The data come from the RNA Mapping Database (RMDB), library TTRDEL. An RNA of 177 nucleotides, treated with DMS and read out base by base.
RNA sequence: GGGAACGACUCGAGUAGAGUCGAAAAGAUAUGGAAAGGGAACUACAAGCCGAGAGCGAAGAACUCGGAAACGAGGGAGCUCGAAGUCUUGCCCUUUCCUAAGUCAAAAGAGGUCUUCGGACCUCAAGAAUACUAAUCGGUUCGCCGAUUAGUAUUCAAAAGAAACAACAACAACAAC
Reactivity to DMS in 0.01 (KOAc 150mM, MgCl2 10mM, bicine 150mM(pH8.5), 24C), signal-to-noise 4, nucleotides 027 to 126: g010a020u000a300u000g000g000a010a010a010g000g000g010a180a010c070u010a300c010a000a020g020c010c000g000a300g010a000g010c010g000a060a160g000a150a180c010u000c000g000g000a040a110a090c020g010a030g000g000g000a080g020c010u000c000g000a090a060g000u000c010u010u000g000c010c000c000u000u000u000c000c010u000a030a080g000u000c010a050a040a120a140g000a010g010g010u000c000u010u020c190g040g000a010c000c000u000c000a010a070